Notes: An RNA of 207 nucleotides, treated with 2A3 and DMS and read out base by base. The reactions ran in a buffer of 150 mM KOAc, 10 mM MgCl2 and 150 mM bicine (pH 8.5), at 24 C.

RNA sequence: GGGAACGACUCGAGUAGAGUCGAAAAGCUAUACACACACUGACCGGAUGCUUGUCAGUGGCUGCCUGGUGCCAAUCAAAGGUCAAAGGUGGGAUCAAGUUAAGCUGUUCAGUACAGGGAUGGCAACUAAGGAUCCAGCAGAGCCUGGCUGAAUCAAGUGGAUUUUAGUAUUCGUACUAAAAUCCACAAAAGAAACAACAACAACAAC
Reactivity to 2A3 in 0.01 (KOAc 150mM, MgCl2 10mM, bicine 150mM(pH8.5), 24C), signal-to-noise 5, nucleotides 027 to 156: g010c010u060a040u120a220c060a000c040a000c000a000c070u010g020a020c010c050g170g030a140u160g070c150u110u070g030u000c010a010g000u010g020g000c010u020g000c000c000u040g000g050u170g010c030c030a020a120u180c080a070a100a120g000g020u040c030a130a030a030g060g010u050g030g030g020a040u080c070a050a020g030u030u110a050a030g010c030u010g040u010u030c010a010g060u100a210c040a050g060g020g030a050u050g030g000c010a070a030c050u050a080a090g100g000a040u040c000c020a010g020c030a010g000a020g080c010c010u010g020g000c020u040g060a040a060u150c080a190a080
Reactivity to DMS in 0.01 (KOAc 150mM, MgCl2 10mM, bicine 150mM(pH8.5), 24C), signal-to-noise 2, nucleotides 027 to 156: g040c010u000a110u010a100c100a090c060a170c020a050c030u000g000a080c000c150g000g000a170u010g020c090u000u000g010u000c020a060g040u010g010g030c050u010g000c050c020u000g040g010u000g010c000c030a060a140u000c030a070a100a130g020g030u010c060a080a040a040g040g020u000g020g010g010a030u010c070a100a100g020u000u010a060a120g100c020u000g030u020u000c030a150g000u000a160c110a110g020g020g010a040u000g040g050c030a080a050c030u020a080a100g030g010a050u000c020c010a070g020c020a150g020a150g020c010c010u000g010g010c020u000g010a040a060u010c040a080a260

Description:
2A3 adducts were read by reverse transcription with SuperScript II with manganese. DMS adducts were read by reverse transcription with MarathonRT. For DMS, 4,419 sequencing reads were counted. Source: RMDB library OK3TST, as collected in RNAgym.